[RMDB]
RNA sequence: GGGAACGACUCGAGUAGAGUCGAAAAAAGGGGUUAAAAGAAACAAGAGAAUGAUUGUUAAGGCAGUGUCUGUUAAGAUACUAGAUCGGGAGGGUCUCUCCUGUUAAUGACUUCCUCACUAGCUGUGUAACUAGAAAGUGCCUUCAUCAGUCUGAGAGUAUAAAUGGCCGUUCGCGGCCAUUUAUACAAAAGAAACAACAACAACAAC
Reactivity to 2A3 in 0.01 (KOAc 150mM, MgCl2 10mM, bicine 150mM(pH8.5), 24C), signal-to-noise 1, nucleotides 027 to 156: a010a010g100g010g010g000u100u070a110a070a000a010g110a040a100a020c090a140a000g010a000g040a240a000u050g000a060u020u070g060u090u060a050a000g010g030c060a050g080u020g050u070c000u030g020u060u060a050a040g060a070u070a030c010u020a010g060a120u160c090g010g000g060a050g000g030g050u030c060u040c010u040c020c050u020g030u100u120a100a090u080g010a040c040u060u050c010c000u080c010a040c000u010a000g040c040u060g070u050g050u190a030a000c010u010a040g050a020a120a040g040u020g000c030c000u080u000c010a040u000c000a000g010u000c000u030g090a140g000a020
Structure probing data (2A3) for a 207-nucleotide construct.
It was measured as part of the RMDB library OK3TST.
The RNA was probed in 150 mM KOAc, 10 mM MgCl2 and 150 mM bicine (pH 8.5) at 24 C.
For 2A3, 394 sequencing reads were counted.